[RMDB]
RNA sequence: GGGAACGACUCGAGUAGAGUCGAAAAGAUAUGGAGAAGCGAGGAUCUUCCGUAACAUCUAGUCGGAAACGACUAGUGGGAAGGGAGCUUACUCCUAAGUCAAAACUACGAAGUUCGCUUCGUAGAACUUACUGGUCGAGUUCGCUCGACCAGUAAGAAAAGAAACAACAACAACAAC
Reactivity to 2A3 in 0.01 (KOAc 150mM, MgCl2 10mM, bicine 150mM(pH8.5), 24C), signal-to-noise 1, nucleotides 027 to 126: g000a000u100a040u120g010g000a000g010a020a000g000c020g070a300g110g000a010u020c020u010u000c000c000g070u100a060a040c010a080u140c010u000a010g000u000c000g070g000a090a040a050c000g020a000c000u000a010g010u030g000g000g000a040a020g010g000g000a010g020c010u000u090a300c010u040c020c010u010a140a020g010u020c040a000a040a090a120c000u000a010c010g010a020a010g000u050u180c300g050c180u000u000c000g000u030a010g010a010a010
Reactivity to DMS in 0.01 (KOAc 150mM, MgCl2 10mM, bicine 150mM(pH8.5), 24C), signal-to-noise 2, nucleotides 027 to 126: g000a060u010a300u010g010g000a000g020a100a000g010c000g000a080g010g000a010u020c000u010u000c010c000g020u000a060a110c120a020u020c010u000a010g010u000c000g020g000a100a080a220c010g000a000c000u010a000g020u000g010g000g000a010a000g000g000g010a040g020c010u000u000a100c000u000c010c000u010a020a080g020u000c020a110a080a090a180c000u000a000c000g010a010a000g030u000u010c300g000c010u020u000c000g020u000a000g000a100a080